[RMDB]
RNA sequence: GGGAACGACUCGAGUAGAGUCGAAAAAUGCGGAUCUCCCAUGAAUCGCACCAGCGAGCAGCGCACAAGGAUAUCGUGAUGCUCAGUGAUGUCCGAUCUUUCAUGACCAUGUUCACGUCACCGGAUCCGGUAAUAUGGUAUUCGUACCAUAUUACCGAAAAGAAACAACAACAACAAC
Reactivity to 2A3 in 0.01 (KOAc 150mM, MgCl2 10mM, bicine 150mM(pH8.5), 24C), signal-to-noise 9, nucleotides 027 to 126: a000u160g010c030g020g010a050u010c020u020c030c020c010a020u090g080a050a070u090c030g000c030a040c030c010a030g040c010g040a010g020c030a010g020c030g040c030a020c040a100a090g100g020a090u080a040u180c040g030u060g060a070u080g040c020u020c050a040g040u040g080a070u060g030u000c020c020g050a070u020c050u040u140u070c050a070u080g030a050c030c000a060u090g050u050u100c060a040c090g030u020c030a020c060c020g040g020a040u040c030
Reactivity to DMS in 0.01 (KOAc 150mM, MgCl2 10mM, bicine 150mM(pH8.5), 24C), signal-to-noise 8, nucleotides 027 to 126: a060u010g010c040g010g000a060u010c050u000c010c010c010a090u020g000a080a040u010c070g010c040a070c080c050a120g010c060g000a050g010c050a060g020c080g010c060a070c100a090a080g000g010a050u010a050u010c050g010u010g000a090u030g000c060u000c040a110g010u010g000a040u010g010u000c010c020g000a080u010c040u000u010u010c070a060u010g000a070c040c030a060u010g010u010u000c030a060c080g000u000c030a050c040c030g000g010a090u020c080
An RNA of 177 nucleotides, treated with 2A3 and DMS and read out base by base. The RNA was probed in 150 mM KOAc, 10 mM MgCl2 and 150 mM bicine (pH 8.5) at 24 C. For DMS the reverse transcriptase was MarathonRT.